[RMDB]
RNA sequence: GGGAACGACUCGAGUAGAGUCGAAAAACUAAACUAGCAUCAACAAUAGAAGUUGGACUAGAGACUACAGUUAGAAGGGCUAACAGAGUGUUAAGUGAUGCGCUCAAAAGAUACCCUAGGGUAGAUAAACAGUCCUUCUAUUCGUAGAAGGACUGUUAAAAGAAACAACAACAACAAC
Reactivity to 2A3 in 0.01 (KOAc 150mM, MgCl2 10mM, bicine 150mM(pH8.5), 24C), signal-to-noise 1, nucleotides 027 to 126: a000c100u090a110a000a000c050u050a050g060c020a140u050c000a030a030c010a000a170u110a300g200a250a030g090u050u010g010g010a030c000u010a000g020a030g010a070c040u070a100c080a010g040u030u060a050g050a160a010g080g070g020c060u040a120a020c040a100g010a000g030u050g000u050u140a050a110g070u070g190a040u080g040c040g000c020u000c000a120a180a000a060g050a050u080a050c010c030c000u030a060g160g000g000u000a030g050a100u180a080
Reactivity to DMS in 0.01 (KOAc 150mM, MgCl2 10mM, bicine 150mM(pH8.5), 24C), signal-to-noise 3, nucleotides 027 to 126: a120c070u010a080a120a130c020u000a010g020c090a120u000c000a010a030c030a080a230u030a220g030a120a110g030u000u000g010g000a080c010u010a020g010a150g000a220c000u000a030c090a080g030u000u000a060g010a080a030g000g030g000c060u010a050a090c090a110g000a020g020u000g000u020u000a060a070g010u010g000a110u010g000c030g000c010u000c030a020a080a100a090g020a110u010a060c020c010c000u000a160g000g020g010u010a010g010a080u000a070